An RNA of 177 nucleotides, treated with DMS and read out base by base. For DMS, 686 sequencing reads were counted. The RNA was probed in 150 mM KOAc, 10 mM MgCl2 and 150 mM bicine (pH 8.5) at 24 C.
RNA sequence: GGGAACGACUCGAGUAGAGUCGAAAAAAAAGAUAUGGAUGAUACUCCCCACCGUACGCUCGCAUCGAUCGCUGAUCGGAAACGAUCAGCGGGAGCGAGCAGUACGAGGUAUCAUCCUAAGUCAAAACGGCAUAAGUUAGUUCGCUAACUUAUGCCGAAAAGAAACAACAACAACAAC
Reactivity to DMS in 0.01 (KOAc 150mM, MgCl2 10mM, bicine 150mM(pH8.5), 24C), signal-to-noise 1, nucleotides 027 to 126: a140a120a140a160g020a040u040a120u020g050g000a000u030g050a010u000a000c000u000c070c040c010c070a300c070c020g010u000a000c040g000c010u000c000g050c000a260u010c200g000a110u000c030g010c000u000g000a040u000c000g000g000a060a020a100c000g040a030u000c000a010g010c030g000g000g000a000g000c000g010a050g000c000a020g070u000a010c010g000a100g040g050u000a010u010c000a030u000c000c000u000a000a140g050u020c060a010a080a040a190